Chemical mapping of a 177-nucleotide RNA with DMS. In probing experiments dimethyl sulfate is read out at A N1 and C N3, which are open when not base-paired. The RNA was probed in 150 mM KOAc, 10 mM MgCl2 and 150 mM bicine (pH 8.5) at 24 C.
RNA sequence: GGGAACGACUCGAGUAGAGUCGAAAAUCAGGUCUAUGAAAAUGUGAGACAAGCUGGCUUGAACCAUGCAGUGUCCGAGAAUUUAGCACUAGCUGUUGUGAAGAAAAAAUUGCGCCGAGGCCACGCCCUCAAUGACACCCUUCGGGGUGUCAUUGAGAAAAGAAACAACAACAACAAC
Reactivity to DMS in 0.01 (KOAc 150mM, MgCl2 10mM, bicine 150mM(pH8.5), 24C), signal-to-noise 1, nucleotides 027 to 126: u020c000a070g000g000u020c030u000a050u030g000a080a060a090a070u000g000u000g000a120g010a060c110a080a070g020c060u000g010g000c020u000u000g010a100a120c090c050a040u000g050c040a110g000u000g000u000c090c070g000a130g000a150a090u000u000u000a040g010c080a050c020u000a050g020c030u000g000u010u000g000u000g000a060a050g030a000a000a140a060a110a100u000u000g030c070g010c010c020g010a070g000g000c040c030a050c090g000c030c060
Background:
For DMS the reverse transcriptase was MarathonRT. The DMS profile rests on 935 reads.